The record gives the reactivity of an RNA of 307 nucleotides to DMS and 2A3. The DMS profile rests on 5,703 reads. Values cover nucleotides 27 to 266. 2A3 adducts were read by reverse transcription with SuperScript II with manganese. The reactions ran in a buffer of 150 mM KOAc, 10 mM MgCl2 and 150 mM bicine (pH 8.5), at 24 C.

RNA sequence: GGGAACGACUCGAGUAGAGUCGAAAACACCAGCUUCGGCUGGUGAGGUAGUCUACGGACUACCACGCGUGCGUGAGCACGCGACCAUACGUUCGCGUAUGGAGGCCACGUUCGCGUGGCCAGUUGUGUUCUUCGGAACACAACAAGCGCGCUUAAUCUGAAAUCAGAGCGGGGGACCCAUUGCACUCCGGGUUUUUCCCGUAGGGGUGAAUCCUUUUUAGGUAGGGCGAAAGCCCGAAUCCGUCAGCUAACCUCGUAAGCGCGCUAGUCUGCUGUUCGCAGCAGACAAAAGAAACAACAACAACAAC
Reactivity to DMS in 0.01 (KOAc 150mM, MgCl2 10mM, bicine 150mM(pH8.5), 24C), signal-to-noise 2, nucleotides 027 to 266: c010a000c010c010a000g000c000u000u020c210g020g030c000u000g000g000u010g000a020g000g010u000a000g010u000c000u000a140c300g010g030a020c000u000a000c000c020a080c070g010c010g010u010g000c000g000u020g000a300g020c040a000c000g020c000g010a110c000c030a010u000a000c010g000u010u010c300g050c010g000u000a010u010g010g000a140g000g020c010c000a020c030g030u010u030c270g010c010g050u000g000g000c000c010a020g000u000u000g000u000g020u000u010c010u010u000c180g000g020a030a000c000a000c010a010a000c000a150a020g000c010g020c000g020c000u000u000a050a070u000c010u000g000a170a150a140u040c000a020g000a000g000c040g020g000g000g000g010a090c120c290c020a100u010u020g000c090a230c080u010c120c050g040g010g000u000u010u020u030u020c020c010c000g020u000a030g010g010g030g000u000g000a070a100u000c030c020u020u000u010u000u010a010g000g000u000a080g000g030g010c010g040a060a130a190g010c000c010c020g000a070a040u010c050c020g000u020c120a110g020c030u000a200a160c010c020u000c010g000u000a170a070g010c000g040c020g020c020u000a020
Reactivity to 2A3 in 0.01 (KOAc 150mM, MgCl2 10mM, bicine 150mM(pH8.5), 24C), signal-to-noise 2, nucleotides 027 to 266: c010a000c010c000a000g020c000u050u110c150g210g000c000u010g000g000u010g010a020g000g000u000a000g010u020c020u020a060c290g140g000a010c010u000a000c010c000a060c020g010c010g020u010g000c040g030u120g020a070g000c010a000c020g020c020g040a020c000c000a010u000a000c000g010u000u110c300g010c020g070u000a000u000g010g020a030g040g000c050c000a040c020g020u080u100c180g010c020g070u000g000g020c020c000a000g000u000u020g000u000g000u000u000c000u020u030c130g050g000a000a010c000a000c000a000a000c000a000a000g000c000g000c030g010c000u000u040a040a040u030c010u000g130a250a120a170u300c010a030g010a010g010c010g000g000g000g000g010a010c010c000c000a050u000u220g060c050a050c030u050c020c050g000g000g050u030u150u040u160u160c010c000c000g000u060a050g020g010g000g000u070g020a010a020u130c010c010u060u300u060u040u080a020g020g000u020a030g000g020g020c040g110a190a010a000g000c000c030c000g010a000a020u060c010c000g110u180c040a040g000c040u000a040a030c000c000u000c000g000u000a000a000g000c000g000c000g000c020u030a010